[RMDB]
The data come from the RNA Mapping Database (RMDB), library OK2TRN. Structure probing data (DMS and 2A3) for a 177-nucleotide construct. For DMS, 6,093 sequencing reads were counted. For 2A3 the reverse transcriptase was SuperScript II with manganese. Conditions: 150 mM KOAc, 10 mM MgCl2 and 150 mM bicine (pH 8.5), 24 C.

RNA sequence: GGGAACGACUCGAGUAGAGUCGAAAAGGUAUAGCCUCCGAGCUGGUGAUCCCUAGUGAGCGCCUGCACUAUCGCAAUCAGGGCUGGCGCUCUGUCGAGACCUCUGGUGUUGCUGAGGAGGAGGCUACGCAUGAAAAGUAUUCGUACUUUUCAUGCGAAAAGAAACAACAACAACAAC
Reactivity to DMS in 0.01 (KOAc 150mM, MgCl2 10mM, bicine 150mM(pH8.5), 24C), signal-to-noise 5, nucleotides 027 to 126: g000g020u010a110u000a030g010c000c000u000c000c010g010a300g020c100u000g010g030u000g000a030u000c210c000c020u000a100g020u000g000a010g010c000g020c010c010u000g010c000a040c010u000a060u000c190g010c250a100a080u010c120a030g010g000g000c010u000g020g000c010g010c000u000c010u010g010u010c120g000a080g000a080c030c030u000c040u000g010g010u000g010u000u000g020c030u000g010a070g010g000a300g000g000a030g010g000c000u000a030
Reactivity to 2A3 in 0.01 (KOAc 150mM, MgCl2 10mM, bicine 150mM(pH8.5), 24C), signal-to-noise 2, nucleotides 027 to 126: g110g000u190a040u040a100g020c000c000u000c000c010g020a020g020c040u010g000g030u020g030a030u030c000c000c000u050a070g070u010g080a010g000c000g010c000c000u030g030c010a020c060u080a070u230c110g070c250a090a110u160c060a100g000g000g020c000u000g020g000c020g000c000u020c000u000g040u040c090g050a090g040a130c050c030u030c050u020g040g000u050g010u040u030g020c010u010g020a000g000g000a010g000g000a000g000g000c000u010a010